[RMDB]
RNA sequence: GGGAACGACUCGAGUAGAGUCGAAAAUGCAAGUAGUGCUAUUGUUGGAAUCACCGUACCUAUUUAGGUUUACGCUCCAAGAUCGGUGGAUAGCAGCCCUAUCAGUAUCUAGGAGAACUGUGCUAUGAAAACGGUAUUGGCUUCGGCCAAUACCGAACAAUUUGUUAUUGUUCGCAAUAACAAAUUGAAAAGAAACAACAACAACAAC
Reactivity to DMS in 0.01 (KOAc 150mM, MgCl2 10mM, bicine 150mM(pH8.5), 24C), signal-to-noise 4, nucleotides 027 to 156: u000g030c040a100a170g020u000a070g020u010g020c010u000a050u010u000g010u000u000g010g010a090a110u010c020a070c040c010g010u000a060c020c020u010a190u000u000u000a030g020g010u000u000u010a060c080g000c050u000c020c020a090a140g000a030u000c080g000g040u000g010g000a090u000a080g010c020a180g000c090c140c020u000a080u000c040a120g010u010a100u000c090u010a120g010g010a120g010a060a050c030u000g010u000g010c050u000a090u010g010a070a060a070a170c020g020g020u000a030u000u000g010g030c010u000u010c290g050g000c000c000a010a010u000a010c010c000g000a000a070
Reactivity to 2A3 in 0.01 (KOAc 150mM, MgCl2 10mM, bicine 150mM(pH8.5), 24C), signal-to-noise 7, nucleotides 027 to 156: u130g000c030a060a040g040u080a010g070u090g050c020u040a040u090u090g060u040u060g050g050a090a080u120c020a030c040c020g020u050a040c000c010u090a180u230u200u240a040g010g010u060u060u080a030c030g000c020u010c020c010a040a010g020a050u080c040g050g070u050g090g000a010u040a030g010c040a010g010c020c000c000u030a040u070c010a030g070u090a050u020c020u040a050g010g040a050g020a030a030c050u070g010u030g050c020u060a050u190g080a050a070a010a030c020g000g000u000a000u000u010g010g010c000u030u040c170g050g000c000c000a000a000u000a000c000c000g000a000a000